Source: RMDB library TTRDES, as collected in RNAgym. Structure probing data (DMS) for a 177-nucleotide construct. The reactions ran in a buffer of 150 mM KOAc, 10 mM MgCl2 and 150 mM bicine (pH 8.5), at 24 C. DMS adducts were read by reverse transcription with MarathonRT.

[RMDB]
RNA sequence: GGGAACGACUCGAGUAGAGUCGAAAAAAAAAAAAGAUAUGGAAACCGACGAUCUAGGGUCCAUCGAUCGCUUAUCGGAAACGAUAAGCGGGAGGACACUAGGGAGGUUUCCUAAGUCAAAAAAAAACAAAUGGUAUUACUUCGGUAAUACCAUUUGAAAAGAAACAACAACAACAAC
Reactivity to DMS in 0.01 (KOAc 150mM, MgCl2 10mM, bicine 150mM(pH8.5), 24C), signal-to-noise 1, nucleotides 027 to 126: a000a000a010a030a060a060a120a080g030a020u030a300u000g000g020a010a010a010c000c000g010a090c260g000a000u000c010u000a040g010g000g020u000c000c000a170u010c140g040a100u020c020g010c000u020u020a010u000c000g000g010a070a080a230c000g020a020u010a000a020g010c000g000g000g000a020g020g000a030c010a010c010u020a000g000g000g000a020g030g030u000u000u020c000c000u000a000a100g010u010c010a030a000a000a000a070a010a040a120a080